[RMDB]
RNA sequence: GGGAACGACUCGAGUAGAGUCGAAAACUCAUGAGAAUUUGAAAAUCGACCAUGGUAGGGCCUGCUGACUUUUGACAGCUAAUGGUGUGCUGAGAAUUGUCCCUCCAAAGAUGCCUUUCCAUUCCCUCGGGAGAGUCUGGGCAGCCCCUACUGGGGGGAAACACUAGAGAUUCGUCUCUAGUGUUUCAAAAGAAACAACAACAACAAC
Reactivity to DMS in 0.01 (KOAc 150mM, MgCl2 10mM, bicine 150mM(pH8.5), 24C), signal-to-noise 2, nucleotides 027 to 156: c020u000c050a110u000g020a200g020a060a130u000u000u000g010a090a070a140a170u000c000g020a060c020c020a040u000g030g020u010a070g020g020g020c040c030u010g000c030u000g010a060c070u000u010u000u010g000a230c060a080g030c020u010a060a100u000g020g010u000g010u000g030c040u010g000a150g000a050a160u020u000g000u010c000c030c030u000c080c040a080a070a080g010a070u000g010c050c030u000u000u000c030c000a180u000u010c010c000c000u000c050g000g000g000a110g000a070g010u000c050u000g030g020g050c000a050g030c070c020c010c020u000a060c080u000g000g000g000g030g010
Reactivity to 2A3 in 0.01 (KOAc 150mM, MgCl2 10mM, bicine 150mM(pH8.5), 24C), signal-to-noise 3, nucleotides 027 to 156: c020u040c030a080u140g060a050g070a180a170u230u210u210g100a160a140a060a090u100c080g050a060c040c020a060u050g010g010u020a000g020g000g020c030c010u020g020c020u030g010a080c020u050u090u100u220g090a090c040a030g010c030u080a080a110u090g060g000u050g030u020g050c030u010g020a040g070a250a130u120u120g040u040c000c010c000u010c020c020a040a070a000g070a050u080g010c010c000u010u060u070c020c000a040u000u050c010c000c000u030c050g010g040g000a050g010a000g030u010c030u080g010g010g000c000a020g000c010c010c010c000u010a020c020u020g000g010g000g020g000